[RMDB]
RNA sequence: GGGAACGACUCGAGUAGAGUCGAAAAGAGGGCGAGUGAUCUCGGAAGGAAUCCCCCAAGCUGCCAACAGAGGAAGAAACAAGACAGAGGAGCCCCCAUGACGCUGGUGAACCAUCGCGAGCUGGGAAAGGAGGCAUCUUCGGAUGCCUCAAAAGAAACAACAACAACAAC
Reactivity to DMS in 0.01 (KOAc 150mM, MgCl2 10mM, bicine 150mM(pH8.5), 24C), signal-to-noise 4, nucleotides 027 to 129: g000a020g050g010g010c130g020a060g070u000g070a070u010c040u010c100g040g030a030a080g030g000a130a140u030c040c020c040c060c010a130a040g030c160u060g040c040c100a090a080c250a070g000a030g000g000a040a050g050a040a050a060c080a000a000g030a070c130a100g000a040g060g000a090g000c090c060c000c000c090a060u030g040a080c160g010c090u040g010g040u000g000a050a080c070c030a030u000c000g000c000g030a050g010c040u030g000g040g050a050a000a130g000
Reactivity to 2A3 in 0.01 (KOAc 150mM, MgCl2 10mM, bicine 150mM(pH8.5), 24C), signal-to-noise 3, nucleotides 027 to 129: g050a040g000g010g020c050g040a000g060u170g050a060u000c020u060c030g010g010a050a030g000g000a010a100u100c030c000c020c000c000a030a040g020c020u040g030c000c000a110a040c070a090g120a020g010g020a050a000g000a010a050a010c030a020a000g100a050c010a020g020a020g000g000a010g020c000c000c000c000c000a050u080g040a010c080g010c030u010g000g030u130g050a010a010c060c000a030u030c010g000c040g030a020g000c000u000g000g000g020a000a000a030g140